[RMDB]
RNA sequence: GGGAACGACUCGAGUAGAGUCGAAAAAAUAGGGUUUUCAACAGGUGUUAACUUUGUUGUUACACCGGCAGGCUUUGUAGAUACUGAUUCUGGCUCAAGAAUAGCACAGAUUCCUUCUAAACCACCACCUGGUGAUCAGUUUAAACACUUAAUACCAUAUUUCUGAUACAUUCGUGUAUCAGAAAUAAAAAGAAACAACAACAACAAC
Reactivity to 2A3 in 0.01 (KOAc 150mM, MgCl2 10mM, bicine 150mM(pH8.5), 24C), signal-to-noise 4, nucleotides 027 to 156: a000a010u230a080g020g000g010u110u030u040u160c080a080a050c060a120g000g000u020g020u060u090a050a050c060u130u120u150g070u150u030g000u000u070a010c000a010c000c000g000g000c000a010g020g000c040u020u080u190g040u070a050g010a100u080a140c050u080g010a050u050u000c000u020g010g000c010u000c060a050a080g080a230a170u140a090g010c040a040c010a260g020a010u020u020c010c000u050u050c020u080a070a090a080c030c010a010c010c010a020c000c040u070g020g010u020g020a080u110c050a020g000u030u080u100a050a070a000c040a010c050u040u100a050a020u040a150c020c010a030
Reactivity to DMS in 0.01 (KOAc 150mM, MgCl2 10mM, bicine 150mM(pH8.5), 24C), signal-to-noise 2, nucleotides 027 to 156: a100a070u000a030g000g010g030u010u000u010u010c040a070a060c060a040g010g030u020g000u000u010a030a050c000u000u000u000g010u000u010g020u000u000a100c010a040c030c010g010g000c000a060g020g020c030u010u000u030g020u000a100g010a130u000a120c100u000g000a090u000u000c040u000g020g000c050u010c090a090a130g000a080a090u000a040g010c060a180c050a070g010a090u000u000c030c030u000u000c030u000a050a070a090c030c010a060c070c020a090c070c050u000g050g030u000g000a070u000c060a060g010u010u000u000a070a080a060c040a020c050u000u000a050a080u010a100c020c030a270

This 207-nucleotide RNA was probed chemically with 2A3 and DMS.
The DMS profile rests on 4,827 reads.
2A3 adducts were read by reverse transcription with SuperScript II with manganese.
The data come from the RNA Mapping Database (RMDB), library OK3TST.
The RNA was probed in 150 mM KOAc, 10 mM MgCl2 and 150 mM bicine (pH 8.5) at 24 C.